An RNA of 177 nucleotides, treated with 2A3 and DMS and read out base by base. 2A3 adducts were read by reverse transcription with SuperScript II with manganese. The 2A3 profile rests on 1,657 reads. The DMS profile rests on 3,373 reads. DMS (dimethyl sulfate) methylates the pairing face of unpaired adenines and cytosines.
[RMDB]
RNA sequence: GGGAACGACUCGAGUAGAGUCGAAAACGCUUGCGUACCCGGGAUGGUGCGGCUUCGUUGGUUCGGGUCUGUCGCGGUUGGUGAUGUCUGUCGCGUCAGGGCGUGCACAGGCAGGGCGAAGACGUAAGGAGCAUGUUGGCUUCGGCUAACAUGCUCCAAAAGAAACAACAACAACAAC
Reactivity to 2A3 in 0.01 (KOAc 150mM, MgCl2 10mM, bicine 150mM(pH8.5), 24C), signal-to-noise 2, nucleotides 027 to 126: c060g020c020u000u030g000c020g010u060a070c000c000c000g030g130g020a090u140g040g000u070g000c010g040g000c030u040u010c040g020u010u050g010g060u030u020c010g040g000g100u000c040u040g180u010c000g010c000g000g020u040u060g030g040u030g070a040u020g040u010c010u000g000u000c010g000c000g010u020c020a040g100g020g000c010g010u020g000c020a000c010a010g000g000c000a000g010g100g040c010g010a030a000g050a000c030g040u050a170a060
Reactivity to DMS in 0.01 (KOAc 150mM, MgCl2 10mM, bicine 150mM(pH8.5), 24C), signal-to-noise 1, nucleotides 027 to 126: c040g000c040u010u000g000c000g000u010a080c060c020c030g040g000g000a110u000g020g010u000g020c090g010g020c010u000u000c070g010u000u010g000g010u000u010c020g000g010g000u000c020u000g010u000c010g010c040g000g000u030u010g000g050u010g000a120u000g000u010c000u000g000u030c040g020c000g050u000c070a110g000g000g000c010g030u000g000c120a030c050a040g000g020c040a060g000g010g040c040g000a160a060g040a080c020g000u060a050a070